RNA sequence: GGGAACGACUCGAGUAGAGUCGAAAACUGCAGCUUCUGGAGGACCUGCGCGGCCAGGUGCUGACGCUGAAGGAGCACACUGGCGAGAAGGAGGCCGAGGCCAGGCGCCUGCAAGAGGCGGUGAGGGCAAUACGUCCGGUUUCGACCGGACGUAUUGAAAAGAAACAACAACAACAAC
Reactivity to 2A3 in 0.01 (KOAc 150mM, MgCl2 10mM, bicine 150mM(pH8.5), 24C), signal-to-noise 1, nucleotides 027 to 126: c010u040g000c020a000g010c010u040u060c010u030g080g060a050g030g060a070c000c000u040g060c240g000c050g170g010c010c030a000g000g000u010g000c000u030g080a170c070g030c100u160g040a180a080g070g000a030g070c000a010c020a040c000u050g010g000c040g000a060g010a020a040g020g030a030g020g090c000c010g030a050g000g120c040c030a000g020g000c150g050c040c020u050g000c070a150a080g000a030g090g000c080g020g040u130g000a110g000g050g060
Reactivity to DMS in 0.01 (KOAc 150mM, MgCl2 10mM, bicine 150mM(pH8.5), 24C), signal-to-noise 3, nucleotides 027 to 126: c050u010g010c050a120g000c010u010u000c020u010g020g010a090g010g010a130c050c010u000g000c080g020c040g000g000c010c000a030g000g010u000g010c010u010g010a120c070g000c170u010g000a170a120g030g010a050g000c000a020c010a150c010u010g010g000c020g020a080g010a120a100g010g000a080g000g010c070c030g000a120g000g000c040c020a050g000g000c070g000c080c010u010g010c100a070a070g000a050g000g030c030g010g000u010g010a090g010g000g000
Structure probing data (2A3 and DMS) for a 177-nucleotide construct. For 2A3, 1,231 sequencing reads were counted.